[RMDB]
RNA sequence: GGGAACGACUCGAGUAGAGUCGAAAACCUGGCAGCUCAAACGGCCUGGCAGAUGCUUGGAGAGAGGGGGCUUCUUGAGACAGCACCAUUUCUGGGAAGAGAGUCACCUGGGAGGGAUGAGGCCACGAUUUCACACGCUUUUCGAAGCGUGUGAAAUAAAAGAAACAACAACAACAAC
Reactivity to DMS in 0.01 (KOAc 150mM, MgCl2 10mM, bicine 150mM(pH8.5), 24C), signal-to-noise 3, nucleotides 027 to 126: c000c010u000g000g020c030a040g000c030u010c030a070a090a120c220g000g000c030c030u010g000g010c050a060g000a060u030g010c020u010u020g010g000a130g020a100g020a070g020g000g020g020g000c000u000u010c040u030u000g000a160g000a110c120a050g000c140a100c090c060a090u010u020u040c090u030g000g010g010a100a120g000a040g000a090g020u000c060a040c050c010u000g020g040g000a100g010g000g000a100u020g020a070g030g020c040c030a040c120g000
Reactivity to 2A3 in 0.01 (KOAc 150mM, MgCl2 10mM, bicine 150mM(pH8.5), 24C), signal-to-noise 5, nucleotides 027 to 126: c000c000u010g050g000c010a020g040c010u040c100a110a070a060c060g040g000c000c000u030g040g010c040a040g010a170u120g020c030u070u110g010g030a070g010a010g040a050g040g010g000g020g000c000u100u000c020u030u180g030a080g020a090c030a000g050c020a050c040c010a080u100u110u070c030u040g010g010g040a150a030g040a030g010a010g040u050c020a040c120c040u000g000g040g030a090g020g020g000a040u050g030a040g040g000c000c000a030c030g030